[RMDB]
RNA sequence: GGGAACGACUCGAGUAGAGUCGAAAAUACUUAGUACGCGCGUAGUUGCAGGCAUUCCGGGUGCAGCAACUGACGCGGAAAACUUUUCCCAGAGUGUGCGCUUCAACUGGCGUGCUGAGUAGUGCACGAAUUGCACGUACGUUCGCGUACGUGCAAAUUCUGUACUGGGAUUCGUCCCAGUACAGAAAAAAGAAACAACAACAACAAC
Reactivity to 2A3 in 0.01 (KOAc 150mM, MgCl2 10mM, bicine 150mM(pH8.5), 24C), signal-to-noise 3, nucleotides 027 to 156: u090a000c000u000u000a010g010u000a000c000g000c000g000c000g040u000a020g020u000u000g010c050a080g060g030c020a030u110u090c150c210g260g050g030u010g000c000a020g000c010a000a010c010u090g130a040c010g000c000g010g000a010a010a010a030c030u150u110u010u010c010c000c010a000g010a000g020u090g000u010g010c030g020c020u030u100c060a290a300c130u020g020g000c000g010u010g000c000u000g000a010g000u060a000g010u020g010c000a000c030g040a060a110u040u020g000c010a000c000g010u000a000c000g030u030u070c180g000c010g110u000a000c010g000u000g000c000a000a000a000
Reactivity to DMS in 0.01 (KOAc 150mM, MgCl2 10mM, bicine 150mM(pH8.5), 24C), signal-to-noise 2, nucleotides 027 to 156: u020a050c060u000u000a070g010u010a150c010g020c000g030c030g010u000a050g020u000u000g030c010a150g010g010c010a070u000u010c030c300g000g050g150u010g020c010a300g000c000a000a020c010u000g000a030c000g020c000g020g000a030a140a060a090c070u010u010u010u000c000c020c020a250g000a130g040u000g010u000g010c030g010c020u000u000c050a090a110c120u000g020g000c060g000u000g010c000u000g000a050g010u000a080g020u000g010c020a050c040g000a060a210u010u000g040c000a030c030g000u010a000c000g030u010u000c300g040c010g040u010a010c000g040u010g000c000a000a000a020